[RMDB]
RNA sequence: GGGAACGACUCGAGUAGAGUCGAAAACACUACUGACCACAGGGAACCAAUGAGAUUCUCCGGAUGUACAUCGCCCUGACGGGUCUGCAGCAUGCCGGCCGCAUCCUGACUACCAGGAUCCAGUAGAGGCGAUUAAAAUAUUCGUAUUUUAAUCGCCAAAAGAAACAACAACAACAAC
Reactivity to 2A3 in 0.01 (KOAc 150mM, MgCl2 10mM, bicine 150mM(pH8.5), 24C), signal-to-noise 2, nucleotides 027 to 126: c010a020c020u090a020c010u030g030a040c010c010a030c060a100g020g010g000a060a030c060c020a080a180u120g050a090g020a150u100u000c030u020c030c090g060g010a020u040g030u040a050c010a050u080c060g020c000c000c020u050g070a060c060g050g000g010u030c030u020g030c010a050g040c020a040u160g060c010c000g000g000c030c000g050c020a010u010c000c010u040g030a120c040u050a090c070c010a010g030g010a030u040c040c000a000g030u030a010g020a080
Reactivity to DMS in 0.01 (KOAc 150mM, MgCl2 10mM, bicine 150mM(pH8.5), 24C), signal-to-noise 3, nucleotides 027 to 126: c070a210c050u010a030c030u010g010a120c030c060a170c090a050g010g000g000a110a070c090c050a120a110u010g020a130g000a060u000u000c050u000c070c050g000g000a070u010g020u000a060c080a060u010c190g010c030c000c010u010g010a060c230g000g000g020u000c050u000g000c040a080g010c090a060u000g000c030c030g010g020c100c080g000c060a010u010c020c000u010g010a190c130u000a100c080c030a020g000g000a030u000c060c020a050g010u000a070g020a220